An RNA of 177 nucleotides, treated with 2A3 and DMS and read out base by base. Source: RMDB library OK2TST, as collected in RNAgym. For 2A3, 15,847 sequencing reads were counted.
RNA sequence: GGGAACGACUCGAGUAGAGUCGAAAAGUGAAAGGGCGUUGACGACUUAGCGAGUUUGGCGACUUGAUAGUCACGUGACACGAAUACACGGCCUCGAGGUGCACGUGAUCGUAAGGGGCACUAGGGCCCAUACUAUGCCGUUCGCGGCAUAGUAUGGAAAAGAAACAACAACAACAAC
Reactivity to 2A3 in 0.01 (KOAc 150mM, MgCl2 10mM, bicine 150mM(pH8.5), 24C), signal-to-noise 7, nucleotides 027 to 126: g120u090g070a140a040a050g060g020g020c040g050u060u070g040a060c060g010a020c040u080u080a030g090c030g070a040g030u020u060u110g070g010c040g010a060c020u050u060g050a040u120a080g020u020c000a000c050g010u010g030a060c010a000c030g060a060a020u160a100c090a020c070g070g000c010c010u060c050g050a140g010g100u060g000c000a010c040g010u020g030a020u030c000g010u020a060a090g010g020g010g000c040a020c060u050a030g020g040g000c010
Reactivity to DMS in 0.01 (KOAc 150mM, MgCl2 10mM, bicine 150mM(pH8.5), 24C), signal-to-noise 9, nucleotides 027 to 126: g020u010g010a100a090a100g010g010g010c040g010u000u010g000a140c090g000a070c070u000u010a110g010c070g010a040g010u000u000u000g020g010c100g010a070c070u000u000g000a100u000a100g010u000c010a020c040g000u000g000a140c030a040c040g010a080a100u000a110c100a070c110g010g000c070c040u010c080g010a110g010g020u010g000c010a020c010g010u000g000a020u000c110g010u010a070a080g000g010g010g010c050a080c090u000a090g010g010g010c110

The reactions ran in a buffer of 150 mM KOAc, 10 mM MgCl2 and 150 mM bicine (pH 8.5), at 24 C.